Chemical mapping of a 207-nucleotide RNA with DMS and 2A3. Reactivities are rounded to 0.1 and cut off at 0 and 3. High DMS reactivity at an A or C suggests that its Watson-Crick edge is free. For DMS, 5,151 sequencing reads were counted. Values cover nucleotides 27 to 156. Source: RMDB library OK3TST, as collected in RNAgym.
RNA sequence: GGGAACGACUCGAGUAGAGUCGAAAACCACGCCUAGCCAACUUUUAUGUUUUUAGUAGAGACGGGAUUUCACCAUAUUAGCCAGGCUGGUCUUGAACUCCUGACCUUGUGAUCUACCCGCCUUGGCCUUGCAAAGUGCUGGGAUUACAGGCGUGAGCCAGCUAAAACAGUUCGCUGUUUUAGCUGGAAAAGAAACAACAACAACAAC
Reactivity to DMS in 0.01 (KOAc 150mM, MgCl2 10mM, bicine 150mM(pH8.5), 24C), signal-to-noise 2, nucleotides 027 to 156: c000c000a050c060g000c000c000u010a120g020c010c020a050a030c040u010u010u000u040a060u010g020u000u000u000u000u000a090g030u000a150g010a050g000a050c040g000g010g020a230u000u000u000c010a040c010c060a070u010a070u000u000a030g020c010c010a050g030g030c060u000g020g020u000c040u000u000g060a070a090c000u000c000c000u000g000a050c030c030u000u010g060u000g010a010u000c020u000a120c000c000c000g030c000c010u010u010g000g010c040c050u000u020g000c050a080a060a050g020u010g020c030u010g010g000g070a090u000u000a100c040a070g000g030c010g010u000g010a130g010
Reactivity to 2A3 in 0.01 (KOAc 150mM, MgCl2 10mM, bicine 150mM(pH8.5), 24C), signal-to-noise 4, nucleotides 027 to 156: c010c000a010c010g000c000c010u040a050g040c020c020a060a040c040u090u060u050u060a170u190g080u080u100u030u060u180a090g020u040a010g030a000g020a050c020g020g000g000a030u030u010u030c030a030c030c030a030u050a090u170u200a080g040c040c020a020g000g050c080u070g020g040u050c040u070u190g110a100a020c000u030c020c020u030g050a110c010c000u020u100g000u010g000a010u000c010u080a210c020c000c000g040c010c020u010u040g030g020c000c000u030u060g020c030a080a060a070g060u120g080c060u070g040g000g010a020u070u080a080c060a030g000g000c010g010u000g000a010g040